Source: RMDB library OK3TST, as collected in RNAgym. Structure probing data (2A3 and DMS) for a 207-nucleotide construct.
[RMDB]
RNA sequence: GGGAACGACUCGAGUAGAGUCGAAAAAGAGGUCUUUGACAGUCACAAGCUCUGAACACGAGAGUGAUUGGUAGAAGCUAAUAAUGGAGUGGAGCUGAGUUCUUGGUUUCCUCCCCUGGAACAAAAACUCAGAGAGAGGAAUCGCAGAUAAAGUAUACCAUUAUUAGGGUUUCGACCCUAAUAAUGGAAAAGAAACAACAACAACAAC
Reactivity to 2A3 in 0.01 (KOAc 150mM, MgCl2 10mM, bicine 150mM(pH8.5), 24C), signal-to-noise 5, nucleotides 027 to 156: a000g070a030g010g030u040c030u060u060u050g060a030c020a020g020u040c020a020c020a120a130g020c010u010c020u070g100a150a050c070a030c150g020a030g000a000g010u030g010a050u020u040g010g030u090a020g010a060a010g020c030u050a060a030u070a110a040u170g040g010a030g030u040g000g040a030g020c010u000g030a010g050u050u020c030u060u060g090g000u040u070u010c000c020u030c000c000c000c010u010g000g000a030a050c050a060a090a030a010a010c040u040c020a000g030a000g010a000g000a000g020g020a020a010u040c040g000c060a010g020a080u090a050a080a010g050u040a070u040a110
Reactivity to DMS in 0.01 (KOAc 150mM, MgCl2 10mM, bicine 150mM(pH8.5), 24C), signal-to-noise 3, nucleotides 027 to 156: a040g020a100g000g020u010c020u000u000u010g060a100c020a050g020u000c020a070c020a100a220g020c010u000c030u020g010a150a170c120a100c060g010a110g020a210g020u000g000a030u000u010g020g020u000a080g020a090a050g030c070u000a060a090u000a080a080u020g000g010a100g010u000g000g010a110g010c000u000g000a090g000u000u000c030u000u000g020g010u000u010u000c010c000u000c040c060c040c050u000g010g000a030a110c020a050a010a040a030a050c050u010c020a030g010a140g010a110g010a080g010g000a020a030u010c050g000c050a060g010a090u000a060a060a130g000u000a110u000a170

For DMS, 4,793 sequencing reads were counted.